[RMDB]
RNA sequence: GGGAACGACUCGAGUAGAGUCGAAAAUAGUCUUGCUUCUGAAUAAAGAGGCAGUGAUUAAUAUAAAACCAGAGGCCCUUUAUAACAACAGCAGACUUGAACUAUUCAUGUGGGGAGAAUUACAUGCAAAUAUGCAGAAAUUCGUUUCUGCAUAUUUAAAAGAAACAACAACAACAAC
Reactivity to DMS in 0.01 (KOAc 150mM, MgCl2 10mM, bicine 150mM(pH8.5), 24C), signal-to-noise 6, nucleotides 027 to 126: u000a010g010u000c000u000u000g020c010u000u000c100u010g000a220a060u000a030a050a030g000a100g020g020c000a050g010u000g000a030u000u000a050a110u010a120u000a080a060a080a070c040c030a080g010a120g010g010c020c020c020u000u000u000a030u000a070a100c060a030a070c170a040g010c020a040g000a040c020u000u000g010a110a110c050u000a050u000u000c050a030u000g010u000g010g000g020g010a160g010a060a070u000u010a060c090a050u000g010c270
Reactivity to 2A3 in 0.01 (KOAc 150mM, MgCl2 10mM, bicine 150mM(pH8.5), 24C), signal-to-noise 2, nucleotides 027 to 126: u060a010g010u010c030u030u040g000c000u030u020c020u030g100a130a060u060a140a120a020g060a100g010g000c000a000g010u010g000a040u060u020a160a040u100a000u020a060a100a010a030c040c000a020g060a110g290g030c000c000c000u030u010u020a140u050a070a090c060a030a010c010a030g020c000a000g030a050c030u000u020g000a070a010c040u040a110u170u100c040a030u100g000u070g040g040g010g030a110g080a050a080u110u040a060c010a030u060g000c000